This 177-nucleotide RNA was probed chemically with 2A3 and DMS. In probing experiments dimethyl sulfate is read out at A N1 and C N3, which are open when not base-paired. The 2A3 profile rests on 7,335 reads. The DMS profile rests on 4,214 reads.
RNA sequence: GGGAACGACUCGAGUAGAGUCGAAAAGAUAUGGAACUAAUUGUGCCGUUUGACGCGUAUCGGAAACGAUACGCCGAGGAACUACACGGGUUAGUUCCUAAGUCGCGGUGGCGAUUCGUCGCCACAAGUUGUGUCUACGUUUCGACGUAGACACAACAAAAGAAACAACAACAACAAC
Reactivity to 2A3 in 0.01 (KOAc 150mM, MgCl2 10mM, bicine 150mM(pH8.5), 24C), signal-to-noise 3, nucleotides 027 to 126: g030a030u060a010u120g000g010a000a000c000u000a030a020u130u100g150u160g200c030c040g020u100u130u200g010a000c010g000c000g000u000a000u000c010g000g020a060a030a010c000g000a000u000a010c010g000c000c010g000a010g000g110a110a070c100u130a030c110a000c050g060g020g010u000u000a010g000u000u000c000c000u020a050a030g030u010c030g010c070g230g000u010g000g010c020g020a040u020u090c240g100u020c010g080c000c000a000c000a000a000
Reactivity to DMS in 0.01 (KOAc 150mM, MgCl2 10mM, bicine 150mM(pH8.5), 24C), signal-to-noise 4, nucleotides 027 to 126: g000a030u000a300u010g000g010a020a000c010u000a000a020u000u010g020u000g010c040c090g010u000u000u000g000a300c300g000c000g030u000a000u000c000g010g000a120a070a140c000g000a010u000a010c000g020c010c010g000a190g010g000a020a050c040u000a070c040a030c010g000g010g010u000u000a010g000u000u000c000c000u000a010a060g000u000c030g010c260g000g020u010g010g010c000g010a030u000u010c190g000u000c000g000c000c000a000c000a030a070